This 177-nucleotide RNA was probed chemically with 2A3 and DMS. It was measured as part of the RMDB library OK1LIB. The RNA was probed in 150 mM KOAc, 10 mM MgCl2 and 150 mM bicine (pH 8.5) at 24 C. For DMS, 19,306 sequencing reads were counted.
RNA sequence: GGGAACGACUCGAGUAGAGUCGAAAAAUGAGGUCGUACAUUGUGUAGUCAAAUUUCGCCCCUUUAUGACUACAUGUACGACCUAGAGUAUGUUAGUGAAAAAGGGGCGAAAUGCUAUCAUACUCAAGGUUGUAGUAGAUUUCGAUCUGCUACAACCAAAAGAAACAACAACAACAAC
Reactivity to 2A3 in 0.01 (KOAc 150mM, MgCl2 10mM, bicine 150mM(pH8.5), 24C), signal-to-noise 9, nucleotides 027 to 126: a010u300g030a020g010g000u000c000g000u010a010c020a030u120u240g110u070g030u180a010g010u000c050a050a090a160u140u160u080c030g000c000c000c000c000u030u140u080a220u240g010a000c000u010a010c020a040u050g000u000a000c000g000a000c000c000u000a000g000a000g000u000a000u000g010u010u010a010g000u030g200a080a060a030a030a030g000g000g000g000c000g000a020a010a010u080g000c000u000a000u010c000a000u000a010c000u000c010a010a040
Reactivity to DMS in 0.01 (KOAc 150mM, MgCl2 10mM, bicine 150mM(pH8.5), 24C), signal-to-noise 4, nucleotides 027 to 126: a070u040g010a010g010g010u000c000g000u000a000c010a130u030u040g030u010g020u010a010g000u000c010a120a070a130u000u030u030c030g010c010c000c000c000u000u010u000a080u030g000a020c000u010a010c000a040u010g010u000a010c000g000a000c010c000u010a000g000a000g000u000a000u000g000u010u000a010g010u000g000a040a080a020a030a010g000g000g010g020c000g000a040a030a040u040g000c010u000a010u000c000a010u000a010c000u000c010a140a170